This 207-nucleotide RNA was probed chemically with DMS and 2A3. Values cover nucleotides 27 to 156. Conditions: 150 mM KOAc, 10 mM MgCl2 and 150 mM bicine (pH 8.5), 24 C.
RNA sequence: GGGAACGACUCGAGUAGAGUCGAAAAAGGAAAGAAAUGAGUAUGGUUAUCAGGGACUUGGAAGCCCUGCAGUGACAAAAUACGGAGCAAAACAAGUGCCCAAAGUAUGAAGCAAAAGUGCACCACCAGGAGCGAACUGACUGAUCCUGUGGUGCCACAGUCAAAAUACCUUCGGGUAUUUUGACUGAAAAGAAACAACAACAACAAC
Reactivity to DMS in 0.01 (KOAc 150mM, MgCl2 10mM, bicine 150mM(pH8.5), 24C), signal-to-noise 2, nucleotides 027 to 156: a050g030g040a060a040a120g030a070a130a050u000g010a100g020u000a040u000g000g010u010u010a140u000c060a120g010g000g000a060c070u000u000g020g000a240a240g000c000c000c010u000g030c080a060g000u000g000a140c070a080a080a080a090u000a030c030g000g030a020g070c000a110a020a060a190c060a040a060g030u000g010c050c000c020a060a040a110g010u000a040u000g000a040a140g000c050a020a040a100a080g000u000g000c010a030c010c020a040c080c060a050g020g000a050g000c020g020a080a260c150u010g000a070c130u010g030a050u010c010c010u020g030u000g000g000u030g020c000c010a010
Reactivity to 2A3 in 0.01 (KOAc 150mM, MgCl2 10mM, bicine 150mM(pH8.5), 24C), signal-to-noise 4, nucleotides 027 to 156: a000g070g000a060a020a020g030a040a110a040u130g000a030g040u090a070u120g050g000u100u050a060u160c050a040g020g000g020a020c010u060u040g040g020a090a030g010c030c000c000u010g030c010a030g040u030g040a020c030a030a130a010a010u070a060c050g010g020a070g030c020a020a050a000a050c020a050a020g050u040g090c000c010c010a010a030a000g080u090a060u240g070a050a020g040c030a020a020a090a030g090u130g040c000a000c020c010a030c080c100a000g040g000a010g020c060g040a050a050c060u120g100a050c040u090g010a080u010c000c000u000g000u000g000g000u000g000c000c000a010